[RMDB]
RNA sequence: GGGAACGACUCGAGUAGAGUCGAAAACCGUGCACUCUGGGACGAGCUUGAGAAACUGGGUCUGGUGCCAGAUAUGACGGCAUGCCGCGUAAUGUAUCAUGGAAAGAUUUAUCGGUGCACGAUGGGCAAUAUUUUUGAAUUUCGAUUCAAAAAUAUUAAAAGAAACAACAACAACAAC
Reactivity to 2A3 in 0.01 (KOAc 150mM, MgCl2 10mM, bicine 150mM(pH8.5), 24C), signal-to-noise 8, nucleotides 027 to 126: c000c000g000u030g000c020a010c010u040c030u080g010g010g030a010c020g030a030g020c000u040u030g030a030g040a140a080a020c020u040g030g000g070u030c020u040g040g000u020g040c000c000a000g010a030u070a020u080g070a020c010g010g010c010a020u050g020c000c010g000c020g020u020a050a020u080g030u010a010u010c020a030u030g030g040a080a020a020g030a030u000u020u030a090u050c010g010g000u010g000c010a000c010g010a040u040g010g020g000c010
Reactivity to DMS in 0.01 (KOAc 150mM, MgCl2 10mM, bicine 150mM(pH8.5), 24C), signal-to-noise 9, nucleotides 027 to 126: c020c000g000u010g010c030a030c050u010c040u000g010g000g000a050c050g000a090g010c030u010u000g010a090g010a080a090a170c090u010g000g010g010u020c020u000g010g020u000g010c020c020a040g000a070u020a040u010g000a110c070g000g000c050a080u010g000c040c030g010c060g010u000a070a070u020g010u010a010u010c030a060u000g000g010a080a080a090g000a080u000u020u010a060u010c060g000g010u000g000c020a020c040g010a090u030g010g010g020c100